The data come from the RNA Mapping Database (RMDB), library OK2TRN.
Chemical mapping of a 177-nucleotide RNA with 2A3 and DMS.
The 2A3 profile rests on 924 reads.
2A3 is a SHAPE reagent: it acylates the 2'-hydroxyl of flexible nucleotides of all four kinds.
For DMS the reverse transcriptase was MarathonRT.
[RMDB]
RNA sequence: GGGAACGACUCGAGUAGAGUCGAAAAGGAUGAAGAUAAGAAAGAAAACUCCAAUUCAAAUUGGACUGGAGAGUCCGAUGAAGAGGACGAAGGGAAGAAGAAGAGAAUGCCACUACGGGGAGGUGGUGUCAAGUUAAGAGUUCGCUCUUAACUUGACAAAAGAAACAACAACAACAAC
Reactivity to 2A3 in 0.01 (KOAc 150mM, MgCl2 10mM, bicine 150mM(pH8.5), 24C), signal-to-noise 1, nucleotides 027 to 126: g080g030a010u110g010a030a070g010a040u190a130a060g050a120a140a030g090a000a230a080a050c030u000c040c000a030a010u030u050c030a060a190a270u120u060g000g010a010c010u000g030g060a130g040a040g060u000c020c020g020a020u030g050a040a010g000a010g050g000a000c030g020a030a030g000g000g000a000a080g030a060a000g010a040a030g010a020g010a080a020u100g020c000c000a040c050u100a030c050g000g030g000g000a000g030g010u030g000g020u040
Reactivity to DMS in 0.01 (KOAc 150mM, MgCl2 10mM, bicine 150mM(pH8.5), 24C), signal-to-noise 2, nucleotides 027 to 126: g000g000a070u000g000a070a100g000a100u000a050a130g030a040a070a080g020a080a060a100a200c210u000c020c000a030a120u000u000c030a070a160a190u000u020g000g000a020c050u000g000g010a110g000a060g000u000c000c020g020a080u000g000a050a040g000a180g010g010a040c110g010a070a090g000g000g000a050a030g000a060a040g040a020a040g000a110g010a030a060u000g000c020c020a050c050u000a100c090g000g000g000g010a080g000g040u000g010g040u030